[RMDB]
RNA sequence: GGGAACGACUCGAGUAGAGUCGAAAAGUUCGCAUGGUGCACUAUUGUGUUAUUAGUAACUAAGUAAGCUUACAAUCGAAAAUGUUUAACCAUAAAAGGGUAAAAUGGUGUAAGACAGUCUGAGACUUUACGGCUUCACGUUUCGACGUGAAGCCAAGGUACAUCUAACGUUCGCGUUAGAUGUACCAAAAGAAACAACAACAACAAC
Reactivity to 2A3 in 0.01 (KOAc 150mM, MgCl2 10mM, bicine 150mM(pH8.5), 24C), signal-to-noise 3, nucleotides 027 to 156: g050u090u060c030g010c110a030u080g080g000u040g050c040a010c020u110a060u180u210g030u000g020u080u020a060u030u030a050g050u050a080a040c040u000a030a080g050u020a080a020g070c010u040u040a010c060a090a080u090c080g110a040a050a050a040u060g030u030u110u050a020a000c010c000a010u080a160a220a020a000g050g020g000u040a010a030a010a010u060g010g020u010g000u040a020a020g040a050c020a010g000u030c050u040g010a010g020a040c000u080u030u060a060c100g010g010c010u000u000c000a000c000g000u020u020u090c210g060a020c000g010u000g000a000a000g000c000c000a000a000
Reactivity to DMS in 0.01 (KOAc 150mM, MgCl2 10mM, bicine 150mM(pH8.5), 24C), signal-to-noise 1, nucleotides 027 to 156: g010u020u000c040g000c020a230u010g010g010u010g000c020a040c070u000a080u000u000g040u000g010u000u010a050u000u010a120g030u040a010a120c020u010a060a130g020u000a030a060g020c070u000u000a050c030a100a160u010c010g000a080a060a060a110u000g000u010u000u010a110a130c020c010a080u000a070a120a140a250g010g000g060u000a000a050a060a040u030g030g050u010g000u000a050a060g000a070c060a090g010u040c030u020g000a200g010a140c030u000u000u000a050c130g030g010c000u020u000c000a000c000g000u000u000u010c270g020a070c010g010u000g010a010a010g020c000c000a000a010
Source: RMDB library M2RFPK, as collected in RNAgym. The record gives the reactivity of an RNA of 207 nucleotides to 2A3 and DMS. For DMS, 2,149 sequencing reads were counted. In probing experiments dimethyl sulfate is read out at A N1 and C N3, which are open when not base-paired. Conditions: 150 mM KOAc, 10 mM MgCl2 and 150 mM bicine (pH 8.5), 24 C. For 2A3 the reverse transcriptase was SuperScript II with manganese.